[RMDB]
RNA sequence: GGGAACGACUCGAGUAGAGUCGAAAACCAACCGCCUUCGGGCGGUUGGGAUGACAGUCGCGAGGAAAGUCCGGGCUGACUGUCCACGUCAGAACCCGGCUUAAAUCUAUCGCUUCGGCGAUAGAAAGAGGUUGUUAAUUUUCGAAUUAACAACCUCAAAAGAAACAACAACAACAAC
Reactivity to 2A3 in 0.01 (KOAc 150mM, MgCl2 10mM, bicine 150mM(pH8.5), 24C), signal-to-noise 2, nucleotides 027 to 126: c000c000a000a000c000c000g050c010c030u070u090c260g170g010g000c010g000g000u000u010g000g020g010a020u090g030a000c030a050g070u100c030g070c070g170a090g070g150a180a030a010g100u050c020c020g000g000g000c000u020g000a000c010u000g060u150c050c040a050c030g020u010c000a030g020a140a300c000c000c010g040g000c000u000u000a020a050a030u000c000u000a010u000c010g000c000u010u060c210g120g000c000g000a010u000a010g010a020a030a010
Reactivity to DMS in 0.01 (KOAc 150mM, MgCl2 10mM, bicine 150mM(pH8.5), 24C), signal-to-noise 4, nucleotides 027 to 126: c000c000a000a000c000c000g020c010c000u000u020c220g030g010g040c000g020g000u000u000g010g000g000a060u000g010a100c100a050g010u000c040g010c130g000a120g010g010a100a040a030g000u010c010c000g000g000g020c010u000g000a010c000u000g000u000c060c100a080c200g010u000c020a030g010a140a150c010c010c000g000g000c030u000u000a030a100a120u000c010u000a000u000c000g020c000u000u000c160g020g000c000g010a010u000a000g010a010a080a110